This 177-nucleotide RNA was probed chemically with 2A3 and DMS.
In probing experiments dimethyl sulfate is read out at A N1 and C N3, which are open when not base-paired.
For DMS the reverse transcriptase was MarathonRT.
RNA sequence: GGGAACGACUCGAGUAGAGUCGAAAAGCUCAAAUUUAGAACGAUAUAGUAAAGCUUAUUGCCAAAGACUUAAACUACUUUGUAGUAAAAGUGAUAAUACGAUAGCUAUAUCGGAAUGGUUUGCCGUCAGAUAGAAUGACUUCGGUCAUUCUAUCUGAAAAGAAACAACAACAACAAC
Reactivity to 2A3 in 0.01 (KOAc 150mM, MgCl2 10mM, bicine 150mM(pH8.5), 24C), signal-to-noise 7, nucleotides 027 to 126: g050c010u020c050a070a080a100u180u200u170a110g020a090a010c000g000a000u000a000u000a000g040u090a040a060a030g030c020u050u060a070u050u110g080c060c050a100a100a020g100a090c010u050u090a100a150a010c010u050a010c020u080u140u300g020u040a010g010u010a020a090a030a080g010u030g050a050u060a120a020u060a050c060g070a030u070a030g020c000u000a000u000a000u010c010g000g060a030a040u090g060g020u020u020u060g090c040c020g020u020
Reactivity to DMS in 0.01 (KOAc 150mM, MgCl2 10mM, bicine 150mM(pH8.5), 24C), signal-to-noise 2, nucleotides 027 to 126: g000c170u010c010a060a040a060u010u030u010a020g000a220a260c000g000a000u010a000u000a000g010u010a020a090a120g000c040u010u000a020u000u000g000c120c100a090a080a140g000a050c010u000u010a080a110a050c060u000a000c000u050u020u030g000u000a000g010u000a050a110a070a010g010u000g000a110u000a010a030u000a030c170g000a160u000a140g020c010u000a000u000a000u000c020g000g000a060a120u010g000g000u010u000u000g010c150c070g010u010